[RMDB]
Chemical mapping of a 177-nucleotide RNA with DMS and 2A3.
The data come from the RNA Mapping Database (RMDB), library OK2TST.
The RNA was probed in 150 mM KOAc, 10 mM MgCl2 and 150 mM bicine (pH 8.5) at 24 C.
RNA sequence: GGGAACGACUCGAGUAGAGUCGAAAAUACUGGUGCUUCCUAGCUAAAAUCCAUGAAUGUAUUCAGACUGCCUUUCAGGGAUUUGGUACAUAUAUUUCACACAACCAUCCUUAAGUCAUAUGUAAGCUCUAACCACGAGUUUCGACUCGUGGUUAGAAAAAGAAACAACAACAACAAC
Reactivity to DMS in 0.01 (KOAc 150mM, MgCl2 10mM, bicine 150mM(pH8.5), 24C), signal-to-noise 2, nucleotides 027 to 126: u010a130c060u000g020g030u000g020c050u000u000c030c010u020a130g030c040u010a060a050a020a060u010c040c040a070u020g000a070a030u010g010u020a060u000u020c150a090g010a080c080u000g010c070c050u000u010u020c070a030g000g000g010a020u000u010u000g030g000u000a030c090a030u010a050u000a030u000u000u030c100a070c040a110c160a050a110c030c040a070u000c040c010u000u000a060a090g020u000c080a070u010a030u010g000u000a080a120g030c130
Reactivity to 2A3 in 0.01 (KOAc 150mM, MgCl2 10mM, bicine 150mM(pH8.5), 24C), signal-to-noise 2, nucleotides 027 to 126: u100a000c020u030g090g010u040g020c010u060u010c010c020u000a090g000c000u040a060a030a080a110u050c050c000a020u070g050a060a030u110g060u100a070u080u100c020a030g010a110c040u020g010c010c020u090u130u010c030a010g000g010g010a060u040u060u070g050g010u110a060c050a010u210a000u040a040u150u210u190c060a060c000a010c000a050a050c020c000a010u060c100c010u120u080a110a080g040u070c050a020u070a000u150g120u050a060a050g000c010